[RMDB]
RNA sequence: GGGAACGACUCGAGUAGAGUCGAAAAUCACUCUUGUUUCACUUCAGAUCGUAUAAAUCUUUCGCCUUUUACUAAAGAUUUCCGUGGAGUGGAACAAUUAAGAGUUUUACUCAAUUUUUUGAUGCCCCAUACGCUUUGAGUUCGCUCAAAGCGUAUGAAAAGAAACAACAACAACAAC
Reactivity to DMS in 0.01 (KOAc 150mM, MgCl2 10mM, bicine 150mM(pH8.5), 24C), signal-to-noise 2, nucleotides 027 to 126: u000c120a060c060u000c080u000u000g010u010u000u000c010a010c000u000u000c000a080g000a110u000c080g020u000a150u010a040a000a000u000c020u000u000u000c110g020c140c180u020u000u030u010a130c070u010a030a030a020g000a020u000u000u000c240c080g010u000g010g000a010g030u000g000g000a000a000c010a030a030u010u010a070a060g010a190g000u000u030u000u000a180c040u000c030a030a010u000u000u000u010u000u000g000a070u000g000c040c000c010
Reactivity to 2A3 in 0.01 (KOAc 150mM, MgCl2 10mM, bicine 150mM(pH8.5), 24C), signal-to-noise 3, nucleotides 027 to 126: u050c010a000c000u000c010u000u070g010u000u000u000c000a000c000u010u000c030a050g010a300u150c070g020u140a140u120a270a040a010u000c000u020u020u030c010g070c000c050u160u260u180u300a060c040u050a020a010a000g010a020u020u030u000c050c070g040u050g010g020a000g000u000g000g000a000a000c000a000a000u070u040a050a010g000a000g020u030u020u090u110a060c030u010c040a070a080u100u060u040u050u140u140g040a030u120g060c010c020c000

This 177-nucleotide RNA was probed chemically with DMS and 2A3. Conditions: 150 mM KOAc, 10 mM MgCl2 and 150 mM bicine (pH 8.5), 24 C. For 2A3 the reverse transcriptase was SuperScript II with manganese. Values cover nucleotides 27 to 126.